Structure probing data (2A3) for a 207-nucleotide construct.
[RMDB]
RNA sequence: GGGAACGACUCGAGUAGAGUCGAAAAGAAAUGGCAGGACCUGUCGGAGAAGGUGGUCUACCGGCGCUUCACCGAGAUCUACGAGUUCCAUGUGAGUGUGGGGAUGGAGGAGGGACAGGGACCCACCGUUCCAGCUCCACCCUUUGGGAAGGACCUACCUCCGUGAUUUAUUCGUAAAUCACGGAGGAAAAGAAACAACAACAACAAC
Reactivity to 2A3 in 0.01 (KOAc 150mM, MgCl2 10mM, bicine 150mM(pH8.5), 24C), signal-to-noise 1, nucleotides 027 to 156: g020a000a030a030u070g020g060c020a010g080g020a050c000c000u040g020u040c060g000g040a020g000a050a030g030g060u180g050g040u000c010u000a110c040c030g030g010c060g030c060u110u090c020a040c030c020g070a070g010a120u150c040u070a040c120g000a000g030u040u000c000c010a080u090g110u030g130a070g040u050g000u000g010g000g030g000a060u050g000g020a000g000g040a030g030g030g000a040c070a160g100g010g100a160c000c000c000a030c000c000g030u090u020c010c000a000g000c000u020c000c000a010c010c020c020u020u000u120g040g000g020a060a040g020g010a010c040c000u050a040

Background:
The 2A3 profile rests on 514 reads.